Chemical mapping of a 177-nucleotide RNA with 2A3 and DMS. The DMS profile rests on 9,476 reads. High 2A3 reactivity points to a flexible backbone, as in loops and unpaired stretches. For 2A3, 5,384 sequencing reads were counted. DMS adducts were read by reverse transcription with MarathonRT.
RNA sequence: GGGAACGACUCGAGUAGAGUCGAAAAAUAACAUUAAUCAUCUCCUAAGAUGACUAUAGUAGAGGUGCAUUGGUGGGUCAGGGACAUGGCACAUAGCAGAGCCUCAGUUAGAGGCAGAGGAAGACAACGAGCAUUUAUUAUUCGUAAUAAAUGCUCGAAAAGAAACAACAACAACAAC
Reactivity to 2A3 in 0.01 (KOAc 150mM, MgCl2 10mM, bicine 150mM(pH8.5), 24C), signal-to-noise 3, nucleotides 027 to 126: a000u080a020a010c040a030u050u180a070a020u050c010a010u020c020u020c020c030u060a090a030g020a050u090g020a030c040u110a070u060a180g070u040a020g030a030g070g040u030g040c030a070u050u080g030g000u040g020g050g020u040c040a030g030g000g030a030c050a050u050g020g000c030a020c010a070u110a020g020c020a010g020a030g070c000c000u000c020a030g060u100u110a040g010a000g020g000c000a000g020a020g040g020a070a010g050a050c030a070a030
Reactivity to DMS in 0.01 (KOAc 150mM, MgCl2 10mM, bicine 150mM(pH8.5), 24C), signal-to-noise 4, nucleotides 027 to 126: a060u000a070a090c070a120u010u000a030a070u000c010a020u000c010u000c190c100u000a150a080g010a050u000g010a030c080u000a050u000a120g020u000a080g010a050g010g010u000g000c100a070u000u000g010g030u000g010g010g010u000c070a060g000g000g010a060c090a050u000g010g000c050a050c080a040u010a080g010c070a080g010a150g000c010c010u000c020a150g010u000u000a100g010a030g010g010c010a050g010a070g000g000a060a060g010a060c150a040a150